[RMDB]
RNA sequence: GGGAACGACUCGAGUAGAGUCGAAAACUCUUGCACAGAAUCACCUUUCUAUAAUAACCAGUGCAAGAAGGGUUAUUAUACCAUUUAAUGUGCCGAGGCCACGCGGAGUACGAUCGAGCGUACAGCAAAAACGUGAAGUACUUCGGUACUUCACGAAGAGUUUGUAUGGGUUCGCCCAUACAAACUCAAAAGAAACAACAACAACAAC
Reactivity to 2A3 in 0.01 (KOAc 150mM, MgCl2 10mM, bicine 150mM(pH8.5), 24C), signal-to-noise 3, nucleotides 027 to 156: c010u000c000u000u020g000c010a010c000a020g080a140a080u120c000a080c040c000u050u160u150c110u100a010u000a010a010u000a000a010c000c000a010g000u010g010c020a000a000g020a000a010g000g000g000u000u010a000u020u020a010u020a030c020c020a130u100u150u190a170a110u200g050u080g030c000c000g030a020g030g000c030c030a040c060g000c010g030g070a080g040u060a020c020g050a140u160c050g020a030g080c000g010u020a010c000a050g040c050a030a030a030a030a030c000g010u000g000a000a000g000u010a010c000u020u020c060g000g000u000a000c000u000u000c000a000c000g010a020a020

Chemical mapping of a 207-nucleotide RNA with 2A3. 2A3 adducts were read by reverse transcription with SuperScript II with manganese. The RNA was probed in 150 mM KOAc, 10 mM MgCl2 and 150 mM bicine (pH 8.5) at 24 C.